[RMDB]
This 207-nucleotide RNA was probed chemically with DMS and 2A3.

RNA sequence: GGGAACGACUCGAGUAGAGUCGAAAAAUUCAGAGACUAAACGAAGAUGGGGACGCCAAAAUAUAGGCGUCUUUUCUGAUAUAGUCCGACUUAUAGCUGGAAGGCUAUAACGUUUGUGUAGAUGCUCUGGGCCGCACGCGCGCUACACUGACAGAGACUUAUACAAUAAGUUCGCUUAUUGUAUAAGAAAAGAAACAACAACAACAAC
Reactivity to DMS in 0.01 (KOAc 150mM, MgCl2 10mM, bicine 150mM(pH8.5), 24C), signal-to-noise 3, nucleotides 027 to 156: a130u010u000c050a080g010a110g020a080c040u010a020a070a130c110g010a170a050g010a080u010g030g010g020g010a030c000g030c010c010a140a090a110a200u010a190u000a140g040g030c010g020u000c000u000u010u000u000c010u000g010a210u000a140u000a040g000u000c020c010g010a080c040u000u000a020u000a020g020c010u000g040g040a170a200g000g020c010u010a020u000a010a040c100g010u000u000u000g030u000g020u010a060g010a110u000g030c020u010c030u000g010g000g030c030c090g000c040a060c120g030c120g020c050g040c020u000a020c020a040c040u000g010a120c020a090g000a160g000a220
Reactivity to 2A3 in 0.01 (KOAc 150mM, MgCl2 10mM, bicine 150mM(pH8.5), 24C), signal-to-noise 5, nucleotides 027 to 156: a010u160u130c050a030g080a010g000a040c010u050a100a130a060c060g070a060a040g030a040u120g050g000g070g000a010c010g000c010c020a060a040a160a030u300a060u160a150g000g000c000g000u000c000u000u000u000u000c000u010g010a010u010a010u010a080g010u000c010c000g010a000c010u020u020a000u010a020g000c000u030g070g090a100a050g080g000c000u010a010u010a030a010c070g000u000u050u080g030u020g010u020a030g020a200u110g010c010u000c050u120g020g120g060c040c030g050c030a040c060g040c010g010c000g000c020u040a010c020a010c030u030g030a020c010a050g100a000g000a070
Source: RMDB library ARCHII, as collected in RNAgym. 2A3 adducts were read by reverse transcription with SuperScript II with manganese. For 2A3, 3,331 sequencing reads were counted.